[RMDB]
RNA sequence: GGGAACGACUCGAGUAGAGUCGAAAAGACGGGGUGUUCCGUACCGUUUACUGCCACCUGCACGGUGAGCCGACCUGGAACGGUCGCAUCCUGCAUACCCACUAUGCCACCGGUCAGCAGGCCGAAGGCUUCGAGGCAGCUUCGGCUGCCUCGAAGCAAAAGAAACAACAACAACAAC
Reactivity to 2A3 in 0.01 (KOAc 150mM, MgCl2 10mM, bicine 150mM(pH8.5), 24C), signal-to-noise 1, nucleotides 027 to 126: g020a040c000g000g000g000g000u030g020u150u000c040c010g000u010a020c010c000g000u040u050u040a100c020u030g010c000c020a000c010c000u200g140c150a090c220g000g000u020g000a060g040c030c000g040a050c000c070u080g040g010a020a000c000g020g000u050c060g000c000a000u040c000c020u000g000c000a020u080a040c000c120c000a020c100u180a120u200g040c000c030a040c060c000g020g020u000c040a100g120c050a070g110g000c000c030g050a060a010g020
Reactivity to DMS in 0.01 (KOAc 150mM, MgCl2 10mM, bicine 150mM(pH8.5), 24C), signal-to-noise 1, nucleotides 027 to 126: g030a090c000g010g000g020g030u010g020u020u010c160c050g010u000a130c060c000g000u000u000u010a140c050u000g000c000c000a030c020c000u020g000c290a150c180g000g020u020g000a050g050c020c150g000a090c080c140u020g010g020a080a010c030g000g000u000c150g000c000a010u010c040c000u000g000c070a110u000a060c030c080c010a070c240u040a020u020g000c030c000a140c120c020g040g000u000c030a130g030c070a130g000g000c010c040g000a110a110g000
Background:
This 177-nucleotide RNA was probed chemically with 2A3 and DMS. The DMS profile rests on 734 reads. Conditions: 150 mM KOAc, 10 mM MgCl2 and 150 mM bicine (pH 8.5), 24 C. For 2A3, 1,067 sequencing reads were counted.